Conditions: 150 mM KOAc, 10 mM MgCl2 and 150 mM bicine (pH 8.5), 24 C. Chemical mapping of a 177-nucleotide RNA with DMS and 2A3. The DMS profile rests on 8,286 reads.

RNA sequence: GGGAACGACUCGAGUAGAGUCGAAAAUGCACUUUUCGCACCAGUUCAAUGCCGAUACUCUCCUUGUGUCUUUUCUCACAGAGGAACAGGGCACUCGCAAAUGCCUUCAUCGAAAAGACUGAGUUCAUAAAUGAUACGUGUUCGCACGUAUCAUUUAAAAAGAAACAACAACAACAAC
Reactivity to DMS in 0.01 (KOAc 150mM, MgCl2 10mM, bicine 150mM(pH8.5), 24C), signal-to-noise 7, nucleotides 027 to 126: u000g010c080a080c090u000u000u010u010c070g000c070a110c070c040a080g010u000u000c080a070a100u000g010c080c040g010a110u010a070c060u000c040u000c040c030u000u000g000u000g010u000c010u000u000u000u000c020u000c090a100c150a090g010a090g010g010a070a070c180a070g000g000g020c020a020c060u000c150g010c160a070a080a160u000g000c020c000u000u000c100a080u000c110g000a040a050a070a070g010a050c060u000g010a110g010u010u000c060a100
Reactivity to 2A3 in 0.01 (KOAc 150mM, MgCl2 10mM, bicine 150mM(pH8.5), 24C), signal-to-noise 4, nucleotides 027 to 126: u090g010c020a020c070u050u060u120u110c090g000c040a040c020c020a040g010u070u040c070a070a060u120g070c040c010g020a010u040a070c030u020c010u030c020c030u030u020g020u000g010u020c020u040u110u050u010c030u030c010a110c020a020g120a050g050g040a040a040c030a020g030g020g010c010a020c010u040c040g100c060a080a070a030u040g000c010c000u050u060c030a090u060c030g070a060a060a050a010g040a030c060u090g030a040g070u070u030c030a030